Chemical mapping of a 207-nucleotide RNA with 2A3. The reactions ran in a buffer of 150 mM KOAc, 10 mM MgCl2 and 150 mM bicine (pH 8.5), at 24 C.
[RMDB]
RNA sequence: GGGAACGACUCGAGUAGAGUCGAAAAUGAUUGCCUUAGCACAGAAGACUGGGGCUUCACCUUGAAUAACUCAGCAACUGGUUCAUCACCCCAUCUUUGUAAGCACCUCUCUACAUGCAGAGCUCCCAGCUAGGAGCCAGGGAGGCCGUGAGGGAGACUUCAUCCUCGUAUUCGUACGAGGAUGAAGAAAAGAAACAACAACAACAAC
Reactivity to 2A3 in 0.01 (KOAc 150mM, MgCl2 10mM, bicine 150mM(pH8.5), 24C), signal-to-noise 1, nucleotides 027 to 156: u140g010a060u040u200g030c000c030u020u090a010g010c060a060c040a170g160a140a030g090a130c130u010g030g000g000g070c000u060u030c050a120c010c000u040u000g050a060a000u100a070a060c040u020c140a050g030c000a070a090c070u060g020g000u060u000c050a050u000c030a160c000c110c000c000a030u000c040u020u150u100g030u120a130a070g020c020a070c010c050u010c010u010c000u060a300c030a140u120g070c070a060g000a050g060c000u000c000c020c020a030g000c000u080a050g020g070a030g020c000c050a050g090g040g000a030g020g030c050c040g010u020g000a070g000g050g000a030g010a010